Chemical mapping of a 177-nucleotide RNA with 2A3 and DMS. For 2A3, 915 sequencing reads were counted. Values cover nucleotides 27 to 126.

RNA sequence: GGGAACGACUCGAGUAGAGUCGAAAAUUUGUGCGAUGCCUAAAUCUAAAAUUUCAUGGCAAGUUUUGAAGUUUUUAUCUUUAGGGUGAUGUACGUAAGCGCCAUUAAAAUUAACAAUUGGUGUCGUUGUAGUGAUAACCUUCGGGUUAUCACUACAAAAAGAAACAACAACAACAAC
Reactivity to 2A3 in 0.01 (KOAc 150mM, MgCl2 10mM, bicine 150mM(pH8.5), 24C), signal-to-noise 2, nucleotides 027 to 126: u030u010u020g030u030g000c030g040a000u090g030c020c000u040a060a040a000u150c120u170a000a040a040a040u030u000u080c050a060u040g130g030c200a120a040g050u080u140u120u220g000a040a010g000u000u020u000u100u030a030u000c070u020u090u070a030g020g000g000u080g110a060u130g010u000a040c060g050u070a070a000g000c000g020c010c020a040u080u020a000a100a050a040u120u170a080a070c130a050a050u020u080g000g000u000g020u050c080g000u000
Reactivity to DMS in 0.01 (KOAc 150mM, MgCl2 10mM, bicine 150mM(pH8.5), 24C), signal-to-noise 1, nucleotides 027 to 126: u010u010u050g000u020g040c050g000a100u000g000c000c020u010a030a060a030u030c130u020a020a020a020a040u000u000u000c060a020u000g000g000c180a050a040g000u030u000u000u040g000a020a130g040u010u000u000u000u000a000u000c050u000u000u000a010g020g000g030u010g010a140u030g050u030a060c060g010u040a100a040g040c000g000c000c000a000u020u000a000a010a040a060u010u050a080a100c180a300a150u030u000g050g000u000g010u000c000g000u000